The data come from the RNA Mapping Database (RMDB), library OK2TRN. An RNA of 177 nucleotides, treated with DMS and 2A3 and read out base by base.
RNA sequence: GGGAACGACUCGAGUAGAGUCGAAAAGUCGAUCGUCAGCACUACGACAGAACUAAAGUCCCUGGAGUCUAGGGAGAGUUCUGUGUGAGACAUUCUCGCACGUAGUGGGCUCGAUCGAGAAUGUCUCGCAGUGGACUGUAUUCGUACAGUCCACUGCAAAAGAAACAACAACAACAAC
Reactivity to DMS in 0.01 (KOAc 150mM, MgCl2 10mM, bicine 150mM(pH8.5), 24C), signal-to-noise 5, nucleotides 027 to 126: g000u000c020g010a030u000c030g020u000c070a300g000c010a020c010u010a020c020g000a220c030a010g020a020a010c010u000a070a120a190g010u000c010c000c000u000g010g020a230g020u010c070u000a020g020g010g000a050g000a030g020u000u000c000u000g000u010g020u000g000a010g010a150c210a130u010u000c000u000c000g010c080a240c120g010u000a020g010u000g000g000g000c140u000c020g000a060u000c010g000a010g000a070a060u000g000u000c010u000c010
Reactivity to 2A3 in 0.01 (KOAc 150mM, MgCl2 10mM, bicine 150mM(pH8.5), 24C), signal-to-noise 5, nucleotides 027 to 126: g050u020c000g000a030u010c010g070u030c040a030g080c000a060c020u020a010c020g060a010c010a030g010a000a000c010u070a160a070a240g170u010c010c010c000u010g070g100a300g230u080c100u140a000g000g000g010a050g000a010g030u000u000c010u010g050u010g030u030g030a010g010a010c040a050u220u040c000u000c000g000c000a050c030g010u030a000g000u020g020g070g020c050u020c030g030a060u000c000g000a000g000a020a030u040g000u010c010u000c030
Background: For DMS, 6,133 sequencing reads were counted. For 2A3, 9,069 sequencing reads were counted. Conditions: 150 mM KOAc, 10 mM MgCl2 and 150 mM bicine (pH 8.5), 24 C.